[RMDB]
RNA sequence: GGGAACGACUCGAGUAGAGUCGAAAAAGAAAUAGGGAUUCUCGAAGGAGUUGAGUCCUUCGAGGAUUGCUAAGCAAAGAUGCAGAACUAUCAAUGAACGACUUUGCUCAUCUUUGUAUACAAAAAACGUAUAAGGAUGCUUCGGCAUCCUUAUACGAAAAGAAACAACAACAACAAC
Reactivity to 2A3 in 0.01 (KOAc 150mM, MgCl2 10mM, bicine 150mM(pH8.5), 24C), signal-to-noise 2, nucleotides 027 to 126: a010g070a010a080a030u120a030g060g000g010a010u010u010c000u000c010g010a000a000g030g010a010g000u130u150g180a080g170u040c010c000u020u000c000g000a000g000g000a000u000u000g010c000u020a030a000g010c010a000a000a010g000a010u020g000c140a020g040a050a070c060u070a100u240c050a040a240u220g070a140a000c090g120a060c080u050u120u190g010c040u020c010a020u020c020u040u000u020g030u040a120u020a140c030a000a160a000a030a000a000
Reactivity to DMS in 0.01 (KOAc 150mM, MgCl2 10mM, bicine 150mM(pH8.5), 24C), signal-to-noise 2, nucleotides 027 to 126: a100g010a100a090a170u000a040g000g000g000a010u000u010c000u000c000g030a010a010g000g000a070g010u000u000g020a290g010u010c000c000u000u000c020g000a000g000g000a000u000u000g000c000u000a010a180g000c020a000a000a030g000a020u010g010c150a020g010a070a050c150u000a110u000c060a150a190u010g000a080a150c140g000a030c060u020u000u000g000c020u000c060a000u010c020u000u000u000g010u000a060u000a020c080a010a000a110a060a080a100
Overview:
An RNA of 177 nucleotides, treated with 2A3 and DMS and read out base by base. DMS adducts were read by reverse transcription with MarathonRT. For 2A3 the reverse transcriptase was SuperScript II with manganese. Source: RMDB library M2PK90, as collected in RNAgym. The RNA was probed in 150 mM KOAc, 10 mM MgCl2 and 150 mM bicine (pH 8.5) at 24 C.